Structure probing data (2A3) for a 207-nucleotide construct.
The RNA was probed in 150 mM KOAc, 10 mM MgCl2 and 150 mM bicine (pH 8.5) at 24 C.

[RMDB]
RNA sequence: GGGAACGACUCGAGUAGAGUCGAAAAACGGUCGUACGCGACCGAGGCGCGGCUAGGUCGACGGUCCGAACAAUGGCAUCCCGCAUUCUGCCAUCCGCCGCGCAGCUUCUUCUCAAACGGUGCGGAAAAAAGUAGGACACCUUCGGGUGUCCUACAACAAUCCACUUCUCUUCGGAGAAGUGGAUUGAAAAGAAACAACAACAACAAC
Reactivity to 2A3 in 0.01 (KOAc 150mM, MgCl2 10mM, bicine 150mM(pH8.5), 24C), signal-to-noise 1, nucleotides 027 to 156: a000c010g000g010u010c020g000u090a050c240g010c020g180a000c000c000g010a060g000g000c000g000c010g020g000c000u010a000g010g020u060c070g100a150c240g120g070u020c000c000g000a000a010c000a010a000u000g000g000c000a010u120c050c000c000g010c020a020u300u100c010u020g000c000c000a010u010c010c030g010c010c000g000c040g000c000a000g000c030u200u140c010u080u000c030u010c030a090a080a060c120g000g000u000g000c020g000g000a010a000a000a000a150a000g010u000a000g000g000a010c010a010c010c040u040u120c240g060g000g000u000g000u000c000c000u000a000c000a000a000